[RMDB]
RNA sequence: GGGAACGACUCGAGUAGAGUCGAAAAAGUGGGGUAGUUUACACCAACAACCGAUAGCGGUUCUCCCGUCGGGCCUACCGCUCGACUUGCACCUGAAGUCGCAGGUAUGCGCUCACAAUCGCUAUCAACCUCCCAUCCUAUUCGUAGGAUGGGAGGUAAAAGAAACAACAACAACAAC
Reactivity to DMS in 0.01 (KOAc 150mM, MgCl2 10mM, bicine 150mM(pH8.5), 24C), signal-to-noise 3, nucleotides 027 to 126: a080g030u000g000g020g010g040u000a100g020u000u020u020a050c060a100c050c040a050a080c120a120a060c150c140g000a010u000a000g010c000g030g010u000u000c210u000c020c040c010g000u020c110g040g000g030c000c060u000a050c110c060g000c140u000c040g000a010c000u000u000g020c110a150c200c120u000g000a060a030g010u010c020g040c220a090g000g020u000a030u000g020c100g010c050u000c030a190c220a010a030u000c000g030c000u000a000u000c010a130
Reactivity to 2A3 in 0.01 (KOAc 150mM, MgCl2 10mM, bicine 150mM(pH8.5), 24C), signal-to-noise 3, nucleotides 027 to 126: a000g120u130g000g040g020g020u050a150g060u090u180u150a070c090a020c010c010a050a090c010a030a020c070c030g030a010u000a000g010c010g000g010u110u000c040u010c050c010c020g020u080c050g010g010g000c010c010u030a040c030c020g050c050u040c030g010a000c000u000u080g060c090a130c080c070u110g050a050a000g020u080c020g000c050a000g010g010u050a070u130g110c150g000c000u010c010a040c020a000a010u020c010g000c000u000a000u000c010a010

Overview
This 177-nucleotide RNA was probed chemically with DMS and 2A3. It was measured as part of the RMDB library OK2TST. For DMS, 2,271 sequencing reads were counted. For DMS the reverse transcriptase was MarathonRT. Conditions: 150 mM KOAc, 10 mM MgCl2 and 150 mM bicine (pH 8.5), 24 C. 2A3 adducts were read by reverse transcription with SuperScript II with manganese.